[RMDB]
RNA sequence: GGGAACGACUCGAGUAGAGUCGAAAAUUGUUAGCUAGCAAUCCCAUCGCUAAGGAGAAGCAUGGGCUCACGGGCUAUACCUGUGAUGUAAAACCCACAUACUAUACUACAUUGCACUGUGUACUAGACUAACAAGUGACUUCGGUCACUUGUUAGUAAAAGAAACAACAACAACAAC
Reactivity to DMS in 0.01 (KOAc 150mM, MgCl2 10mM, bicine 150mM(pH8.5), 24C), signal-to-noise 4, nucleotides 027 to 126: u010u010g010u000u000a090g010c140u020a100g010c040a060a080u030c020c000c020a030u000c210g030c000u000a070a120g020g010a140g010a130a030g000c030a050u010g000g000g030c110u000c020a010c050g000g000g000c140u030a100u020a300c010c010u000g010u000g010a010u010g000u020a030a070a060a140c030c000c020a070c180a080u020a070c140u000a060u010a070c090u010a040c080a040u000u000g020c050a080c140u010g000u000g000u020a060c080u000a100g000
Reactivity to 2A3 in 0.01 (KOAc 150mM, MgCl2 10mM, bicine 150mM(pH8.5), 24C), signal-to-noise 5, nucleotides 027 to 126: u010u010g030u040u030a050g060c160u040a000g000c030a020a020u030c030c000c000a010u050c150g000c000u060a060a070g130g030a130g130a180a000g030c020a010u000g000g010g000c000u000c000a000c010g010g000g010c100u110a030u240a180c010c000u010g000u000g010a010u010g030u110a020a040a050a080c010c060c020a030c010a040u250a040c030u140a030u010a110c020u030a030c010a120u050u100g050c050a020c090u020g010u010g010u070a110c010u040a020g050